[RMDB]
RNA sequence: GGGAACGACUCGAGUAGAGUCGAAAAGAUUGGCUGGACUCCCGGGGCCUGCCGCACGCUGUCGCGGUGACGCUGGUCUUGUUGAGCGGUUUCGCGGUUCUCGGCGGCAUCCUGACGUUCGUCGUCAGGGAUAGUGAAGGUUCGCCUUCACUAUCCCAAAAGAAACAACAACAACAAC
Reactivity to DMS in 0.01 (KOAc 150mM, MgCl2 10mM, bicine 150mM(pH8.5), 24C), signal-to-noise 3, nucleotides 027 to 126: g000a060u020u010g010g000c020u020g030g000a070c030u010c040c020c010g020g010g010g030c080c100u000g010c020c010g000c030a060c040g000c220u010g000u020c080g030c000g000g010u010g020a090c030g010c020u000g020g030u040c140u020u000g020u000u010g000a050g000c040g000g000u010u010u000c020g020c020g000g020u010u010c060u020c010g010g000c010g000g000c050a030u000c040c030u010g000a050c040g010u010u010c100g000u020c010g010u000c030a090
Reactivity to 2A3 in 0.01 (KOAc 150mM, MgCl2 10mM, bicine 150mM(pH8.5), 24C), signal-to-noise 9, nucleotides 027 to 126: g060a050u170u180g030g010c070u080g030g020a050c010u030c020c010c000g000g010g000g010c010c030u030g010c020c000g040c010a180c060g080c100u060g020u110c030g000c020g040g060u040g030a020c030g010c020u070g040g140u140c070u160u250g170u180u250g060a010g000c020g010g030u020u050u080c030g000c010g030g000u180u050c040u010c020g010g000c000g000g010c010a010u040c010c010u020g010a020c030g020u040u040c080g050u060c000g010u020c060a040